[RMDB]
RNA sequence: GGGAACGACUCGAGUAGAGUCGAAAAACGCUGGUACGCCAGCGAUGUCUCCCUGAAGUGAUGCAUAACCGAUCAGGAUCUACUCAUGUCAACUUUGGUAAAGUUAUGUUGCUUGUCAGGGUGAGAAUAAGGAAGUCGCAUUCGUGCGACUUCCUUAAAAAGAAACAACAACAACAAC
Reactivity to DMS in 0.01 (KOAc 150mM, MgCl2 10mM, bicine 150mM(pH8.5), 24C), signal-to-noise 2, nucleotides 027 to 126: a130c080g020c000u010g020g010u000a070c280g040c000c010a050g010c000g010a040u020g010u020c020u000c000c000c000u000g000a060a030g000u000g020a050u010g000c000a020u000a020a060c030c060g000a080u070c060a040g000g000a110u000c110u030a040c110u000c170a100u050g000u000c100a070a080c050u010u000u000g020g000u000a120a120a090g000u000u000a020u010g020u000u000g000c160u000u000g000u000c010a010g000g000g000u030g010a080g010a090a120
Reactivity to 2A3 in 0.01 (KOAc 150mM, MgCl2 10mM, bicine 150mM(pH8.5), 24C), signal-to-noise 2, nucleotides 027 to 126: a000c000g010c000u040g000g000u000a050c300g050c090c000a000g020c000g050a050u150g060u000c000u000c000c020c000u000g000a070a010g060u090g130a030u200g000c000a000u000a030a000c000c000g070a010u110c030a010g110g000a100u180c090u150a230c070u050c130a040u140g070u000c030a040a000c130u170u170u190g090g030u160a110a000a000g100u100u000a070u100g060u030u090g020c060u240u270g060u130c080a000g000g000g090u000g050a150g000a110a080